[RMDB]
RNA sequence: GGGAACGACUCGAGUAGAGUCGAAAAAUAAAUAGCGUAAUGGACAUUGGGAGUGUACGCUAAGUGUGUGUUGUAUACCUAUCGUCCAAUUGAACACACACACAGUUGGACCUAAUGUCCAAAAAAAGUCAUCAAUGUGAUUCGUCACAUUGAUGACAAAAGAAACAACAACAACAAC
Reactivity to DMS in 0.01 (KOAc 150mM, MgCl2 10mM, bicine 150mM(pH8.5), 24C), signal-to-noise 2, nucleotides 027 to 126: a090u000a040a110a090u000a020g000c000g000u010a080a150u010g010g010a020c000a010u000u000g010g010g000a270g010u010g010u000a010c020g030c020u000a100a110g000u010g010u000g000u000g000u000u000g030u020a060u000a130c080c050u000a060u010c100g000u000c040c060a060a070u000u010g000a050a060c020a010c000a000c010a020c000a030c060a100g010u010u000g010g000a170c010c010u000a020a030u000g000u010c000c000a010a000a030a030a020a010a060
Reactivity to 2A3 in 0.01 (KOAc 150mM, MgCl2 10mM, bicine 150mM(pH8.5), 24C), signal-to-noise 2, nucleotides 027 to 126: a000u260a000a050a040u090a000g070c020g010u060a080a060u100g010g000a000c010a010u010u010g050g000g000a100g080u190g060u080a020c020g000c010u020a090a080g020u000g000u020g010u000g020u060u050g080u070a050u070a090c030c030u110a130u230c060g080u000c010c010a000a030u030u080g060a050a010c000a000c000a000c000a000c020a000c020a020g090u210u170g060g040a030c010c000u000a020a010u010g010u000c000c000a020a000a000a000a000a000a000